[RMDB]
About this RNA: This 207-nucleotide RNA was probed chemically with DMS and 2A3. Values cover nucleotides 27 to 156.
RNA sequence: GGGAACGACUCGAGUAGAGUCGAAAAAUCAUCUGAAGAUCAGCUAUUAGAAGAGAAAGAUCAGUUAAGUCCUUUGGACAUGAUCAGCUUGAUACAAGAACUACUGAUUUCAACUUCUUUGGCUUAAAAAAGGCCACAGAGUUCGCUCUGUGGCCAAGUUGGAUUUAAUCUUCGGAUUAAAUCCAACAAAAGAAACAACAACAACAAC
Reactivity to DMS in 0.01 (KOAc 150mM, MgCl2 10mM, bicine 150mM(pH8.5), 24C), signal-to-noise 1, nucleotides 027 to 156: a080u000c060a040u000c070u000g000a140a220g030a160u000c080a060g010c000u010a020u020u040a030g020a040a090g000a080g000a150a210a050g010a000u000c000a030g040u010u000a190a050g040u000c000c020u010u000u010g040g050a150c050a060u000g000a070u000c080a130g070c100u000u010g010a100u010a090c090a050a060g000a000a050c030u000a130c010u020g000a040u000u060u000c040a080a240c050u000u000c000u000u000u000g000g000c010u000u000a000a150a090a060a120a150g020g000c030c010a060c000a000g030a050g080u000u000c260g040c040u000c010u020g050u000g010g070c000c000a000a000
Reactivity to 2A3 in 0.01 (KOAc 150mM, MgCl2 10mM, bicine 150mM(pH8.5), 24C), signal-to-noise 3, nucleotides 027 to 156: a010u050c030a020u020c040u190g100a090a050g020a150u150c050a020g000c000u030a080u290u070a190g010a000a000g030a000g040a070a010a010g040a010u000c000a000g010u030u060a120a010g000u030c010c040u050u120u260g030g010a050c020a090u110g030a110u120c050a030g180c070u080u150g030a020u060a190c030a050a010g020a060a010c040u050a010c000u070g020a010u000u040u050c040a080a060c000u000u020c000u000u020u000g000g010c010u000u020a030a010a000a040a020a000g000g000c000c000a000c000a000g000a000g030u040u040c020g020c090u020c000u000g010u000g000g000c000c000a000a000
Description: The data come from the RNA Mapping Database (RMDB), library M2RFPK. For DMS, 1,520 sequencing reads were counted. Conditions: 150 mM KOAc, 10 mM MgCl2 and 150 mM bicine (pH 8.5), 24 C.